The record gives the reactivity of an RNA of 177 nucleotides to 2A3 and DMS. Source: RMDB library OK2TRN, as collected in RNAgym. The DMS profile rests on 1,503 reads. The 2A3 profile rests on 1,328 reads. DMS adducts were read by reverse transcription with MarathonRT. The reactions ran in a buffer of 150 mM KOAc, 10 mM MgCl2 and 150 mM bicine (pH 8.5), at 24 C.

[RMDB]
RNA sequence: GGGAACGACUCGAGUAGAGUCGAAAAACUACUGCUGUUACCUAUUCGGUGUCACCAAUAUUGGCAUUUUUAAUGAUCGCAACAUGGUUGGCACCACACCAGCCCGAAAAAGUACGCAUGCCACGUGAGACAGAACCAAUUUCGAUUGGUUCUGUCUAAAAGAAACAACAACAACAAC
Reactivity to 2A3 in 0.01 (KOAc 150mM, MgCl2 10mM, bicine 150mM(pH8.5), 24C), signal-to-noise 2, nucleotides 027 to 126: a000c070u130a030c050u070g080c030u050g050u140u020a050c000c020u070a110u090u180c100g000g000u000g020u020c000a010c020c000a120a100u140a120u170u050g070g020c030a040u040u020u000u000u250a130a120u130g130a150u090c070g000c200a050a000c020a080u060g000g040u010u090g010g020c000a000c000c010a010c020a000c000c000a000g000c000c030c050g060a000a120a000a000a000g060u040a020c080g030c030a020u060g080c030c000a100c080g080u090g050
Reactivity to DMS in 0.01 (KOAc 150mM, MgCl2 10mM, bicine 150mM(pH8.5), 24C), signal-to-noise 2, nucleotides 027 to 126: a100c090u000a110c130u000g000c060u000g000u030u000a070c040c010u000a150u010u010c110g030g040u000g000u000c000a040c000c010a030a110u010a270u000u000g010g000c000a010u000u000u000u010u000a080a040u010g010a170u000c100g010c060a040a030c240a040u000g010g020u010u020g000g000c000a020c020c000a080c210a070c180c050a030g000c050c060c020g010a080a040a060a080a140g020u000a030c100g000c050a070u000g000c020c020a030c160g000u020g000